[RMDB]
RNA sequence: GGGAACGACUCGAGUAGAGUCGAAAAGGGCUUGAGCCAUCGCCCGAAUAAGAUGGAUGAUACAAGUCGACAUAGUACGCGACAUAGAACGUACUCAUUGAAGUGCGAAAGCACGAAGUCCGACGGGUCUGGGACGAUCAUCAGGCAAGACUUAGAAGGUCCUCAUAUAUUUCGAUAUAUGAGGACCAAAAGAAACAACAACAACAAC
Reactivity to 2A3 in 0.01 (KOAc 150mM, MgCl2 10mM, bicine 150mM(pH8.5), 24C), signal-to-noise 4, nucleotides 027 to 156: g020g030g020c020u060u080g050a010g040c020c010a020u010c040g000c010c020c040g030a080a130u260a170a010g040a030u050g020g020a030u090g020a000u100a180c090a160a000g020u030c030g020a040c000a060u110a020g040u020a010c040g030c030g080a070c080a090u210a060g070a070a010c000g010u010a000c000u000c020a080u040u220g070a100a040g000u000g000c020g060a100a010a010g020c020a000c060g020a060a010g030u030c040c020g010a050c030g050g000g000u010c030u060g020g000g050a020c010g010a060u070c020a050u020c030a020g030g000c050a090a020g040a070c020u050u050a070g060a140a020
Reactivity to DMS in 0.01 (KOAc 150mM, MgCl2 10mM, bicine 150mM(pH8.5), 24C), signal-to-noise 3, nucleotides 027 to 156: g000g010g040c010u020u000g010a100g040c030c010a040u010c020g000c040c080c040g000a050a090u020a060a100g010a070u010g020g020a100u000g020a120u010a190c060a040a100g010u000c000g010a050c020a200u000a050g030u000a000c010g060c020g000a300c130a240u010a170g010a140a040c020g010u000a020c010u000c130a170u000u000g010a110a200g020u000g000c000g040a160a100a250g030c010a030c020g020a090a120g020u000c030c000g000a160c030g010g050g000u010c040u020g000g020g010a040c050g000a100u010c040a100u000c050a070g000g030c050a030a080g020a110c030u000u000a170g010a170a170

The data come from the RNA Mapping Database (RMDB), library OK3TST.
Structure probing data (2A3 and DMS) for a 207-nucleotide construct.
Reactivities are given for positions 27 through 156.
Reactivities are rounded to 0.1 and cut off at 0 and 3.
The DMS profile rests on 3,913 reads.
For 2A3 the reverse transcriptase was SuperScript II with manganese.
For DMS the reverse transcriptase was MarathonRT.
Conditions: 150 mM KOAc, 10 mM MgCl2 and 150 mM bicine (pH 8.5), 24 C.